Chemical mapping of a 207-nucleotide RNA with DMS and 2A3.
The reactions ran in a buffer of 150 mM KOAc, 10 mM MgCl2 and 150 mM bicine (pH 8.5), at 24 C.
The DMS profile rests on 3,426 reads.
It was measured as part of the RMDB library M2RFPK.
DMS (dimethyl sulfate) methylates the pairing face of unpaired adenines and cytosines.
Values cover nucleotides 27 to 156.
RNA sequence: GGGAACGACUCGAGUAGAGUCGAAAAAGACGGAAACCCAUCGACUGUCACCAGAUGCUGCAUCACCUGAUCACUGAUGGCUCAACGGUAUCCGGCGGUACAACUGAAUACUUGUAGCUGCCGUUUGAAAAGGAGUUCAUCUUCGGAUGAACUCCAACUGCCAUUAUUACUUCGGUAAUAAUGGCAGAAAAGAAACAACAACAACAAC
Reactivity to DMS in 0.01 (KOAc 150mM, MgCl2 10mM, bicine 150mM(pH8.5), 24C), signal-to-noise 2, nucleotides 027 to 156: a080g010a100c030g000g000a070a050a180c080c010c020a120u000c030g010a090c030u010g010u000c020a070c030c000a080g000a070u000g040c000u000g020c050a120u000c080a050c020c010u000g010a180u000c120a120c090u000g020a050u010g010g000c030u010c040a060a090c020g010g000u000a030u000c010c000g010g020c000g030g010u000a030c090a070a090c050u000g000a060a100u010a060c040u010u000g010u010a110g050c000u000g020c010c010g020u010u030u000g010a080a060a110a160g010g000a020g020u000u000c000a010u000c000u000u010c240g060g020a020u000g010a000a000c000u000c000c000a010a020
Reactivity to 2A3 in 0.01 (KOAc 150mM, MgCl2 10mM, bicine 150mM(pH8.5), 24C), signal-to-noise 5, nucleotides 027 to 156: a000g040a020c050g030g030a050a080a060c020c000c000a020u070c050g110a080c040u060g020u070c020a010c020c010a020g010a100u070g040c040u070g030c010a030u030c010a030c040c020u070g030a040u070c020a010c070u040g010a030u040g060g000c030u020c050a080a070c080g040g010u050a070u040c030c020g000g000c000g010g000u010a000c010a030a020c050u220g100a180a060u150a190c040u030u020g010u030a030g110c010u010g000c020c010g040u030u080u080g110a080a070a020a020g000g000a000g000u000u000c000a000u000c000u020u040c110g100g010a010u010g000a000a000c000u000c000c000a000a000